An RNA of 177 nucleotides, treated with 2A3 and DMS and read out base by base. Source: RMDB library OK2TST, as collected in RNAgym. The RNA was probed in 150 mM KOAc, 10 mM MgCl2 and 150 mM bicine (pH 8.5) at 24 C. For 2A3 the reverse transcriptase was SuperScript II with manganese.
RNA sequence: GGGAACGACUCGAGUAGAGUCGAAAACUGGGAUCGACCAGGUGGCUCAGGAUGCGGGUGUCCUUGACCUUCGGCCACAUCGACUCCAUUGGGACCUUCAGCGUCCGCUCGAAGACCUGGAGGUCGACAUCUUUUGCCUUUUCGAAGGCAAAAGAUGAAAAGAAACAACAACAACAAC
Reactivity to 2A3 in 0.01 (KOAc 150mM, MgCl2 10mM, bicine 150mM(pH8.5), 24C), signal-to-noise 2, nucleotides 027 to 126: c010u000g000g000g070a120u020c010g020a030c040c070a130g190g000u010g000g040c000u050c120a030g030g060a050u110g120c080g110g070g070u170g120u160c040c000u040u160g100a120c010c010u040u050c100g020g000c010c000a000c010a030u010c010g010a010c020u040c050c040a060u070u190g130g050g020a000c010c010u010u000c000a010g040c030g240u000c040c030g000c070u130c050g180a200a030g000a010c010c000u000g000g020a020g000g000u000c000g010a000
Reactivity to DMS in 0.01 (KOAc 150mM, MgCl2 10mM, bicine 150mM(pH8.5), 24C), signal-to-noise 3, nucleotides 027 to 126: c070u010g000g010g000a070u000c040g010a040c260c110a220g020g020u010g000g020c020u000c150a070g010g000a060u000g020c180g000g010g020u000g000u000c030c020u010u020g020a110c070c030u000u000c180g010g000c000c010a010c060a210u000c020g020a030c030u000c010c040a150u000u010g000g030g000a040c020c000u000u000c000a030g000c200g020u000c030c060g010c130u000c170g010a160a140g000a020c010c010u000g000g010a010g020g010u000c000g010a080